The record gives the reactivity of an RNA of 177 nucleotides to DMS and 2A3. 2A3 adducts were read by reverse transcription with SuperScript II with manganese. The reactions ran in a buffer of 150 mM KOAc, 10 mM MgCl2 and 150 mM bicine (pH 8.5), at 24 C.
RNA sequence: GGGAACGACUCGAGUAGAGUCGAAAAAAAAAGGACCUACAGCCGAGCGAGUGACUGAAUACGGCAAAGUCACGAAGCAUCGUUAUACCUAAAUGGUCGUAGCGAAAUAAGAGUUGUUCCCAGUAAACACCUUAUAAUGAUUCGUCAUUAUAAGGUGAAAAGAAACAACAACAACAAC
Reactivity to DMS in 0.01 (KOAc 150mM, MgCl2 10mM, bicine 150mM(pH8.5), 24C), signal-to-noise 7, nucleotides 027 to 126: a040a030a080a110a110g010g000a020c000c000u000a010c020a190g020c150c140g010a110g020c030g010a250g010u000g010a010c000u010g010a100a060u010a060c120g010g010c080a070a120a010g010u000c000a000c000g000a090a140g010c010a140u010c010g010u000u000a000u000a010c000c010u000a060a060a070u010g010g010u000c120g040u000a010g010c010g000a030a070a060u010a090a160g000a000g010u000u000g000u000u000c010c000c000a100g000u000a050a060a130
Reactivity to 2A3 in 0.01 (KOAc 150mM, MgCl2 10mM, bicine 150mM(pH8.5), 24C), signal-to-noise 9, nucleotides 027 to 126: a000a000a000a010a020g120g010a000c010c000u010a010c010a020g090c050c070g110a020g010c020g010a050g040u000g000a000c000u020g050a090a080u160a170c080g050g010c110a090a090a000g010u010c000a000c010g020a070a010g000c000a030u020c000g000u010u010a010u010a010c000c020u150a260a240a130u280g000g020u070c090g010u010a000g010c010g030a040a060a120u150a140a070g000a000g000u000u000g000u010u000c000c000c000a000g000u010a000a010a000